RNA sequence: GGGAACGACUCGAGUAGAGUCGAAAACCAUCCGAGUGGACGUUCGUCCUCCUACGGAUGCCCAGGUCGGACCGCGAGGAGGUGGAGAUGCCAUGCCGACCCGAAGAGGAAAGAAGAACUCGGACGCAUACUCGACGCUUCGGCGUCGAGAAAAGAAACAACAACAACAAC
Reactivity to 2A3 in 0.01 (KOAc 150mM, MgCl2 10mM, bicine 150mM(pH8.5), 24C), signal-to-noise 3, nucleotides 027 to 129: c020c000a000u000c010c010g000a010g000u100g020g010a040c070g190u160u080c130g020u140c000c000u010c010c030u090a110c020g000g000a000u040g010c000c000c000a040g000g100u060c010g020g010a050c010c030g080c020g030a040g010g000a040g000g020u060g030g000a090g000a030u210g060c000c010a080u130g000c020c030g000a020c000c010c000g030a040a040g030a010g030g000a050a010a020g030a030a000g020a010a000c000u000c000g030g000a070c020g000c040a050u060a110
Reactivity to DMS in 0.01 (KOAc 150mM, MgCl2 10mM, bicine 150mM(pH8.5), 24C), signal-to-noise 3, nucleotides 027 to 129: c300c050a060u030c000c000g010a110g030u020g070g000a040c010g020u000u000c090g010u050c040c020u000c090c010u100a160c090g020g070a000u020g050c040c010c030a060g000g040u030c040g000g050a030c100c060g010c090g010a110g010g020a080g000g020u000g000g000a160g000a140u020g000c050c020a090u040g040c050c000g050a050c010c090c050g010a080a080g010a120g000g000a040a030a180g080a080a050g030a110a120c120u090c010g060g020a100c130g000c200a270u080a130